Structure probing data (DMS and 2A3) for a 177-nucleotide construct. The data come from the RNA Mapping Database (RMDB), library OK2TST. The DMS profile rests on 6,160 reads. The 2A3 profile rests on 3,789 reads.
RNA sequence: GGGAACGACUCGAGUAGAGUCGAAAAGCUGCUCGCCAAGCGGAUGGGCAAGACCCGCGUCAUCGCCGAGACCGGCGCGGGCCAGCACGGUGUCGCCACCGCGACCGCGUGCGCGCUGCUCGGCCUAUAUGAGGGAUACUUUCGAGUAUCCCUCAUAAAAAGAAACAACAACAACAAC
Reactivity to DMS in 0.01 (KOAc 150mM, MgCl2 10mM, bicine 150mM(pH8.5), 24C), signal-to-noise 5, nucleotides 027 to 126: g010c040u000g010c020u000c020g000c020c070a170a160g020c120g000g000a080u000g020g010g020c030a060a090g000a070c000c010c010g010c050g010u000c050a150u000c130g010c060c060g000a070g010a140c210c120g010g000c000g010c000g000g000g010c030c040a070g000c010a050c010g020g010u000g000u000c050g010c090c150a120c290c210g010c010g000a040c030c080g010c020g020u000g000c010g010c060g000c110u000g000c020u010c010g000g010c010c160u010a120
Reactivity to 2A3 in 0.01 (KOAc 150mM, MgCl2 10mM, bicine 150mM(pH8.5), 24C), signal-to-noise 2, nucleotides 027 to 126: g010c020u010g010c010u020c020g020c020c010a120a070g160c150g110g030a110u110g090g020g000c040a030a030g030a060c020c000c000g000c010g040u010c020a100u090c050g040c040c020g050a030g010a110c080c080g010g000c010g000c030g010g000g000c000c000a010g000c000a000c010g040g120u090g010u050c030g030c050c040a170c030c070g000c000g000a010c000c010g040c010g040u050g020c010g000c010g020c000u060g010c000u000c000g000g030c030c030u230a180
DMS adducts were read by reverse transcription with MarathonRT. 2A3 adducts were read by reverse transcription with SuperScript II with manganese.